This 207-nucleotide RNA was probed chemically with 2A3 and DMS.
[RMDB]
RNA sequence: GGGAACGACUCGAGUAGAGUCGAAAAUAGGCUCUUGUGGCAACUUGCCUACCCCAAAAUGGUCUCAGCAUGCAAUAAUUGCUCCAUCCUUUUCUCUGCCUUGCCUUUUGUUUGCCAUUAGCUAUUAAUAUAACCAAUUAAAGACGUCUCACGUAGAAUUUAUAUGAGCAUUCGUGCUCAUAUAAAUAAAAGAAACAACAACAACAAC
Reactivity to 2A3 in 0.01 (KOAc 150mM, MgCl2 10mM, bicine 150mM(pH8.5), 24C), signal-to-noise 4, nucleotides 027 to 156: u070a020g000g020c020u030c040u080u080g030u040g040g020c040a030a090c030u070u100g000c000c000u010a070c000c000c010c000a020a030a020a080u130g020g010u050c060u010c060a040g000c030a010u070g000c030a030a150u090a210a110u170u090g010c000u010c020c010a090u090c020c010u040u110u100u050c080u010c010u040g020c000c000u020u060g000c000c000u030u070u040u070g090u050u050u030g020c010c000a040u050u050a020g000c030u030a030u170u080a240a020u150a050u080a170a050c010c010a030a030u120u140a160a060a070g090a000c020g060u070c040u040c100a030c130g030u130a030g080a090
Reactivity to DMS in 0.01 (KOAc 150mM, MgCl2 10mM, bicine 150mM(pH8.5), 24C), signal-to-noise 2, nucleotides 027 to 156: u010a070g020g010c010u010c050u000u000g060u000g000g010c020a060a080c030u010u000g010c010c010u000a110c030c000c010c020a050a090a110a110u010g000g010u000c020u000c050a150g010c060a110u000g000c030a090a090u000a110a120u010u000g010c000u010c020c020a100u010c030c010u000u000u000u030c020u020c020u000g010c000c020u000u000g010c020c010u000u000u000u000g010u000u000u000g020c030c030a100u000u000a040g020c020u000a080u010u010a060a150u000a100u000a030a090c020c010a030a160u000u000a080a070a150g010a060c060g010u000c030u000c030a060c070g010u010a100g010a140
Source: RMDB library OK3TST, as collected in RNAgym. Reactivities are given for positions 27 through 156. Values are in units of 0.01, from 0 to 300, in steps of 10. For 2A3 the reverse transcriptase was SuperScript II with manganese. The DMS profile rests on 6,246 reads.